This 170-nucleotide RNA was probed chemically with 2A3 and DMS. The RNA was probed in 150 mM KOAc, 10 mM MgCl2 and 150 mM bicine (pH 8.5) at 24 C. For DMS the reverse transcriptase was MarathonRT.

RNA sequence: GGGAACGACUCGAGUAGAGUCGAAAAUGUAAUGUGGUUGUACACUUAUAGCAUUGGAGAAGCCUCAAGCCCCAUUGCCUAUCUGGUUUUUGUCACUACACUCACUAGUGAUUAUACGAUUACAGUCAACCCGAUCGGUUCGCCGAUCGGAAAAGAAACAACAACAACAAC
Reactivity to 2A3 in 0.01 (KOAc 150mM, MgCl2 10mM, bicine 150mM(pH8.5), 24C), signal-to-noise 2, nucleotides 027 to 129: u080g010u090a080a010u120g020u010g030g060u070u070g000u100a010c050a040c110u070u080a030u030a020g030c020a000u030u020g060g050a280g040a260a000g020c090c000u100c060a060a010g010c080c000c000c000a020u020u030g020c020c000u040a030u080c060u070g120g000u040u030u010u060u200g010u010c000a000c000u000a040c030a040c050u180c030a090c050u010a000g030u000g000a040u050u100a040u000a140c030g000a020u090u030a060c000a010g060u040c020a040a030c000
Reactivity to DMS in 0.01 (KOAc 150mM, MgCl2 10mM, bicine 150mM(pH8.5), 24C), signal-to-noise 4, nucleotides 027 to 129: u020g000u070a050a100u040g010u060g020g020u100u000g020u010a000c220a120c040u050u040a020u010a080g000c070a060u040u000g040g010a100g120a060a110g020c050c060u080c230a060a240g030c000c000c000c000a090u000u040g030c100c040u030a080u030c070u000g040g000u010u030u010u080u000g010u130c000a020c030u000a040c190a110c180u030c230a110c150u050a030g030u050g020a020u080u000a070u000a030c120g070a000u010u030a030c010a030g030u050c080a050a130c110